[RMDB]
Notes:
The record gives the reactivity of an RNA of 207 nucleotides to 2A3. The reactions ran in a buffer of 150 mM KOAc, 10 mM MgCl2 and 150 mM bicine (pH 8.5), at 24 C. It was measured as part of the RMDB library M2RFPK.

RNA sequence: GGGAACGACUCGAGUAGAGUCGAAAACAGCAAAAAGGAACCGAUUUCCACCAAGUUCGGAAAGAGAUACCGGGCGAGGCGCUGAAGAAAGAAUCUCGCUUCAGACACCCCAAGGACUCGACUGAAGAAUGCACGCCAUCGUUCGCGAUGGCGUGAAGCGUUAGUUAGAGUUCGCUCUAACUAACGCAAAAGAAACAACAACAACAAC
Reactivity to 2A3 in 0.01 (KOAc 150mM, MgCl2 10mM, bicine 150mM(pH8.5), 24C), signal-to-noise 1, nucleotides 027 to 156: c000a000g000c070a000a040a080a020a010g060g000a130a030c220c070g110a100u080u120u010c060c000a090c060c040a150a030g020u040u010c020g090g000a160a100a030g040a000g000a010u060a100c000c040g000g040g000c110g050a110g020g020c100g000c070u030g030a030a000g060a060a300a000g090a090a040u080c030u010c160g050c020u000u010c000a010g030a050c000a120c020c010c000c030a020a090g020g010a030c010u020c110g040a050c120u070g000a080a000g050a070a050u120g120c020a000c010g000c000c010a010u010c030g000u030u030c190g010c020g150a000u000g000g060c000g000u000g010a010a010